An RNA of 177 nucleotides, treated with 2A3 and DMS and read out base by base. The DMS profile rests on 1,076 reads. The RNA was probed in 150 mM KOAc, 10 mM MgCl2 and 150 mM bicine (pH 8.5) at 24 C.

RNA sequence: GGGAACGACUCGAGUAGAGUCGAAAAAAUAGCGGGUCAAGGUACAACGCAGAGAGAUAGGCUCAUCCCAAGUUCUCUUCGCAGUACCAAGACUUCGGUACAGAAGAGAUACCGACUCUUCAUAGAAUGUAAAAGUCUGAUUCGUCAGACUUUUACAAAAAGAAACAACAACAACAAC
Reactivity to 2A3 in 0.01 (KOAc 150mM, MgCl2 10mM, bicine 150mM(pH8.5), 24C), signal-to-noise 1, nucleotides 027 to 126: a000a000u210a060g050c040g000g000g020u000c010a030a000g000g000u010a000c010a160a020c220g010c080a010g000a000g000a000g010a020u060a120g050g050c020u020c080a050u030c010c000c000a010a040g120u030u080c030u010c000u050u010c010g000c000a030g000u000a030c000c010a030a000g010a020c000u120u070c000g000g000u090a030c040a060g010a000a000g000a050g000a010u060a140c040c010g020a010c010u000c050u030u030c000a010u080a100g160a160a120
Reactivity to DMS in 0.01 (KOAc 150mM, MgCl2 10mM, bicine 150mM(pH8.5), 24C), signal-to-noise 2, nucleotides 027 to 126: a050a070u000a020g010c000g000g020g010u000c010a010a280g000g000u000a010c010a120a150c170g020c040a040g010a010g000a020g010a080u010a190g000g010c090u010c300a110u040c230c000c020a090a130g000u000u010c010u000c010u010u010c030g000c100a090g010u020a020c020c000a020a300g000a000c060u000u030c030g000g000u000a040c170a080g020a010a010g000a000g000a050u000a100c020c040g000a170c020u000c020u000u000c020a180u030a090g030a090a060